[RMDB]
RNA sequence: GGGAACGACUCGAGUAGAGUCGAAAACGGCAAAAAAGCAAACUUGACCACCAAGGAUAAAAGAGAUCUUAUCCAAGGAUGCAAAAGAUAAUCUGACUUUUGACACCCACUGAUCUCGAACUUAAAGAAAACCGAGACUACUUCGGUAGUCUCGGAAGAAUAUUAACUCCUUCGGGAGUUAAUAUUCAAAAGAAACAACAACAACAAC
Reactivity to DMS in 0.01 (KOAc 150mM, MgCl2 10mM, bicine 150mM(pH8.5), 24C), signal-to-noise 1, nucleotides 027 to 156: c070g000g020c050a000a020a100a030a060a090g000c080a020a140a170c020u000u000g020a220c120c020a050c000c040a130a300g000g000a050u010a000a040a110a090g000a120g000a110u000c030u000u000a030u010c050c050a010a200g000g000a050u010g000c000a000a050a020a100g000a070u000a060a190u000c090u000g020a180c040u000u000u020u010g040a200c020a030c000c010c000a160c140u010g020a020u000c000u000c030g000a070a080c060u010u000a100a080a180g000a090a010a060a120c010c000g000a010g000a010c010u010a000c040u000u010c230g000g010u010a010g010u000c000u000c000g000g000a000a030
Reactivity to 2A3 in 0.01 (KOAc 150mM, MgCl2 10mM, bicine 150mM(pH8.5), 24C), signal-to-noise 3, nucleotides 027 to 156: c020g080g000c070a040a050a000a050a060a000g120c080a200a120a030c070u080u070g030a150c000c010a010c020c030a100a050g040g000a030u050a130a070a060a040g020a010g000a000u000c010u030u050a010u070c040c020a050a030g020g010a020u050g000c000a000a030a010a010g010a040u100a160a060u160c080u160g100a080c000u030u020u020u060g070a050c010a050c040c000c020a050c120u070g010a010u000c000u000c010g010a080a070c050u140u180a100a090a060g050a040a060a040a000c010c010g010a000g000a000c010u000a000c000u010u030c080g010g000u000a000g000u000c000u000c000g010g000a000a000